[RMDB]
RNA sequence: GGGAACGACUCGAGUAGAGUCGAAAAGGUUUUGCCCAGCUGCUUGCUCUGGAAGACGAUAUUCAGGUGGUAGGAGAGUUUAGUUCAGCGAAACAGGCCCGAGCUGGAUUGCCGGGCUUGCAGGCCAACUCAAGGACUUCUUCGGAAGUCCUUGAGUAAAAGAAACAACAACAACAAC
Reactivity to DMS in 0.01 (KOAc 150mM, MgCl2 10mM, bicine 150mM(pH8.5), 24C), signal-to-noise 1, nucleotides 027 to 126: g030g000u000u000u010u000g020c030c010c040a180g060c030u000g010c070u000u010g040c030u000c020u050g010g030a080a070g000a030c070g000a090u000a100u020u020c120a100g010g060u000g000g020u020a050g040g020a050g000a040g000u000u020u000a070g010u000u010c050a060g040c040g000a150a040a130c030a000g000g000c000c000c010g010a070g010c000u000g000g000a170u010u010g010c000c010g000g020g000c020u000u000g010c020a040g000g000c060c100a130